RNA sequence: GGGAACGACUCGAGUAGAGUCGAAAACAGUCAAGGUGAAGGCGGGCCAGACCAUCGCCGCAUUCUACCAGAGCACCGUCAUGAUCUUUGGCACGAUGGCUCGCUACAUGCUCAGAGUUAGGGAAAAAAUAUCCUAGUAGUUCGCUACUAGGAUAUUAAAAGAAACAACAACAACAAC
Reactivity to 2A3 in 0.01 (KOAc 150mM, MgCl2 10mM, bicine 150mM(pH8.5), 24C), signal-to-noise 8, nucleotides 027 to 126: c030a020g080u050c030a020a060g010g000u050g070a070a020g060g000c020g020g010g010c020c010a030g040a080c030c020a080u070c040g040c070c010g020c010a020u100u040c030u080a090c010c040a030g000a010g070c040a070c090c020g050u060c040a230u100g070a080u030c030u060u070u060g020g000c040a010c110g080a080u100g010g000c010u010c000g010c010u050a030c030a060u140g020c010u020c050a040g010a010g060u050u080a080g040g000g000a060a100a010a020
Reactivity to DMS in 0.01 (KOAc 150mM, MgCl2 10mM, bicine 150mM(pH8.5), 24C), signal-to-noise 9, nucleotides 027 to 126: c110a100g010u000c050a070a080g000g010u000g010a150a080g010g010c020g000g010g000c030c030a090g000a130c100c070a080u000c090g020c050c030g010c090a060u000u010c040u010a090c070c050a110g000a060g010c070a060c040c030g020u000c090a080u010g000a080u000c030u000u000u000g010g010c030a060c100g010a120u010g000g010c020u000c040g010c050u000a060c120a080u000g010c020u000c030a120g010a060g010u000u000a070g010g010g020a000a020a080a090